[RMDB]
RNA sequence: GGGAACGACUCGAGUAGAGUCGAAAAAUCCGUGGAUAUCGGGUGCGCACCGCUCCUCCUCCGGCUGUUCUCCUUCACAGCUACGACCCAUGCGCCGCACAGGCAGUGUCCCGCUUCGUGUGCAAAAAAAACCGCCAGUACUUCGGUACUGGCGGAACAACAAUGUGACGUUCGCGUCACAUUGUUGAAAAGAAACAACAACAACAAC
Reactivity to 2A3 in 0.01 (KOAc 150mM, MgCl2 10mM, bicine 150mM(pH8.5), 24C), signal-to-noise 1, nucleotides 027 to 156: a000u060c040c030g020u020g030g060a100u040a120u300c030g010g020g010u090g030c000g030c030a030c010c070g030c060u020c010c000u010c010c000u070c010c010g070g000c080u050g000u070u030c060u080c080c000u100u120c090a020c010a040g000c020u080a060c050g060a050c050c020c000a060u120g040c030g000c000c030g020c010a020c000a020g050g000c000a010g020u000g030u080c000c020c020g020c040u020u050c050g150u000g020u020g000c020a040a020a000a000a000a000a000a170c000c000g010c000c000a010g000u000a010c000u020u080c150g080g020u000a000c000u020g000g000c000g000g010a000a000